[RMDB]
RNA sequence: GGGAACGACUCGAGUAGAGUCGAAAAACACGGAACUUCGGUUCCGUGUAUAGCGACGAAAUAACACGAUAGCGCUUGUCGCCCGAGCAAAAAGGCGGAAAAACUGCAUCCUCUUCGGAGGAUGCAAUACUUAUAGCUAAUUCGUUAGCUAUAAGUAAAAAGAAACAACAACAACAAC
Reactivity to DMS in 0.01 (KOAc 150mM, MgCl2 10mM, bicine 150mM(pH8.5), 24C), signal-to-noise 7, nucleotides 027 to 126: a040c000a010c000g000g010a020a000c000u000u010c180g030g010u000u000c000c000g020u000g000u000a010u010a060g010c010g010a060c030g000a090a090a090u010a080a070c090a100c080g000a080u000a100g010c050g010c040u000u000g010u000c030g000c000c020c020g010a100g010c150a030a060a050a080a060g000g000c030g020g010a060a040a040a090a110c210u000g000c000a010u000c000c000u000c000u010u020c160g020g000a010g000g000a000u000g000c000a010a020
Reactivity to 2A3 in 0.01 (KOAc 150mM, MgCl2 10mM, bicine 150mM(pH8.5), 24C), signal-to-noise 7, nucleotides 027 to 126: a000c000a000c000g000g000a010a010c000u050u090c220g100g000u000u000c000c010g010u000g000u010a000u010a000g020c010g080a080c020g070a120a070a100u200a140a040c050a020c110g100a070u090a070g080c010g010c040u020u050g050u040c000g010c000c000c020g060a070g060c080a010a090a060a040a000g050g000c030g070g040a040a070a020a030a020c060u050g000c010a010u000c010c000u010c000u030u050c180g080g000a000g000g000a000u000g000c000a000a000

Conditions: 150 mM KOAc, 10 mM MgCl2 and 150 mM bicine (pH 8.5), 24 C. Structure probing data (DMS and 2A3) for a 177-nucleotide construct. Reactivities are given for positions 27 through 126.